[RMDB]
RNA sequence: GGGAACGACUCGAGUAGAGUCGAAAAGCUGGUGCAUCCGUAUUUGCGCCAAAAUUUGUACCGAAUUUUUUGAACUCGUUACGCCGCUAUUUAUUACAGAAUGAAUUUAAAGCGUAAUUUUUUCACAUGGAAUAUUCUUGUUCGCAAGAAUAUUCCAAAAAGAAACAACAACAACAAC
Reactivity to DMS in 0.01 (KOAc 150mM, MgCl2 10mM, bicine 150mM(pH8.5), 24C), signal-to-noise 3, nucleotides 027 to 126: g020c280u000g020g010u000g000c000a010u020c260c220g000u030a130u020u000u000g020c000g010c000c000a040a050a140a140u030u000u000g010u020a140c030c000g040a070a040u000u050u000u010u060u010g000a070a030c080u020c130g010u010u000a010c010g000c000c030g000c230u010a000u000u010u010a010u000u020a170c220a150g050a060a020u000g000a000a010u010u010u010a110a180a120g000c010g010u000a000a000u000u040u000u000u000u010c000a050c300a130
Reactivity to 2A3 in 0.01 (KOAc 150mM, MgCl2 10mM, bicine 150mM(pH8.5), 24C), signal-to-noise 4, nucleotides 027 to 126: g040c080u020g000g000u000g020c000a030u090c070c050g110u130a240u110u100u070g000c000g020c000c000a020a090a010a000u110u060u090g040u100a070c010c060g070a090a080u090u110u040u020u100u230g040a040a000c020u030c090g000u000u010a010c000g000c000c000g000c040u010a010u030u060u000a050u060u060a060c050a050g170a140a100u050g020a010a020u060u110u130a190a050a010g010c000g020u010a000a030u050u020u000u020u060u070c070a030c020a120